[RMDB]
RNA sequence: GGGAACGACUCGAGUAGAGUCGAAAAACGCAUGUAUUUCAUGCAAGAUGAUGAAUUAGGGCAGGCCAUGCUACGCGGAUUGUACAGACAAAUCAUUUGGACGCUCAUUUCAAUGCCUGAUGGUUCGCAGUUAUUUCGUGUUCGCACGAAAUAACUGAAAAGAAACAACAACAACAAC
Reactivity to DMS in 0.01 (KOAc 150mM, MgCl2 10mM, bicine 150mM(pH8.5), 24C), signal-to-noise 3, nucleotides 027 to 126: a100c180g010c000a020u000g000u000a130u020u000u010c010a020u000g010c060a120a130g000a130u000g020a090u010g020a040a090u020u000a120g000g010g010c020a040g020g000c120c050a040u010g010c100u000a050c160g000c090g010g000a060u000u000g020u010a080c120a090g010a080c120a040a060a050u010c090a080u010u000u000g020g010a080c090g000c050u010c050a110u000u010u010c090a050a090u000g020c020c000u000g010a080u010g030g000u000u000c040g010
Reactivity to 2A3 in 0.01 (KOAc 150mM, MgCl2 10mM, bicine 150mM(pH8.5), 24C), signal-to-noise 2, nucleotides 027 to 126: a000c070g000c010a000u040g020u110a250u080u280u230c000a000u010g000c020a020a040g140a090u230g010a010u050g030a030a130u070u070a190g020g030g030c000a010g080g000c020c020a040u080g020c030u060a030c050g030c000g090g000a020u020u080g040u060a060c020a060g090a020c040a060a140a030u100c020a020u070u050u100g070g000a040c010g000c020u020c070a040u000u130u040c070a060a060u090g000c020c010u000g020a060u050g000g020u000u000c030g000
An RNA of 177 nucleotides, treated with DMS and 2A3 and read out base by base. For DMS the reverse transcriptase was MarathonRT. The reactions ran in a buffer of 150 mM KOAc, 10 mM MgCl2 and 150 mM bicine (pH 8.5), at 24 C. For DMS, 2,414 sequencing reads were counted. Values are in units of 0.01, from 0 to 300, in steps of 10.